[RMDB]
RNA sequence: GGGAACGACUCGAGUAGAGUCGAAAACAAAACAUUCAAAAACAGAACAGCAAAUGACAUAGGAUUAAGUGAAGAUGGGAACUUCAAGGUAGAAAAGAAAAAGUGCCUGAAUGGCUUCUCAAGGUCGGAGCCGGUAAUUAUUCGUAAUUACCGGCUCAAAAGAAACAACAACAACAAC
Reactivity to DMS in 0.01 (KOAc 150mM, MgCl2 10mM, bicine 150mM(pH8.5), 24C), signal-to-noise 2, nucleotides 027 to 126: c050a120a070a150a130c180a090u070u060c080a020a090a050a080a040c050a050g020a080a040c090a090g000c060a050a080a040u000g000a100c140a100u000a050g000g000a150u000u020a020a080g000u000g000a010a080g000a050u000g000g040g000a040a030c050u010u000c050a080a050g000g000u000a000g000a040a010a090a100g040a100a040a110a050a170g010u010g000c010c000u000g020a030a040u010g050g000c210u000u000c000u000c050a060a060g010g050u030c110g010
Reactivity to 2A3 in 0.01 (KOAc 150mM, MgCl2 10mM, bicine 150mM(pH8.5), 24C), signal-to-noise 2, nucleotides 027 to 126: c000a000a050a020a000c160a000u230u300c050a030a080a000a050a040c200a040g060a150a060c020a020g080c020a000a120a150u120g050a170c050a080u130a040g100g120a140u150u090a240a050g160u050g060a000a000g020a010u020g000g080g000a010a000c000u050u070c050a070a030g030g000u050a050g030a010a050a000a050g220a010a070a020a020a000g120u070g030c000c000u040g000a020a020u050g030g000c000u000u000c030u020c040a070a040g100g000u140c010g070
About this RNA:
The data come from the RNA Mapping Database (RMDB), library OK1LIB. Structure probing data (DMS and 2A3) for a 177-nucleotide construct. Values cover nucleotides 27 to 126. The RNA was probed in 150 mM KOAc, 10 mM MgCl2 and 150 mM bicine (pH 8.5) at 24 C. DMS adducts were read by reverse transcription with MarathonRT. For 2A3, 1,083 sequencing reads were counted.